[RMDB]
RNA sequence: GGGAACGACUCGAGUAGAGUCGAAAACAAUCAACAAUAUGGUUUGUGUAGUUAUGCUGAAAAUCGUUGAGGUUGUAUGGAAUAGGUUUACCGUAAGACCUUAAGUUGAAAAACUUUAAAAUUAAUCAAAAUCAUGUACACUUCGGUGUACAUGAAACUUAUGUUGACCGUUCGCGGUCAACAUAAGAAAAGAAACAACAACAACAAC
Reactivity to 2A3 in 0.01 (KOAc 150mM, MgCl2 10mM, bicine 150mM(pH8.5), 24C), signal-to-noise 2, nucleotides 027 to 156: c010a000a000u130c010a000a070c050a080a100u100a030u180g070g010u070u060u060g040u030g010u040a040g040u140u100a040u210g030c080u080g130a070a060a090a070u120c040g040u010u040g010a010g040g000u070u000g010u010a130u070g080g040a100a160u050a130g000g000u030u030u020a070c010c010g030u110a050a000g030a010c000c000u060u020a160a000g000u000u000g000a040a030a030a060a060c040u080u110u210a080a050a050a080u050u180a070a120u130c010a020a150a000a060u010c000a000u000g000u000a000c000a000c000u030u110c130g050g000u000g000u000a000c000a000u000g010a000a000a000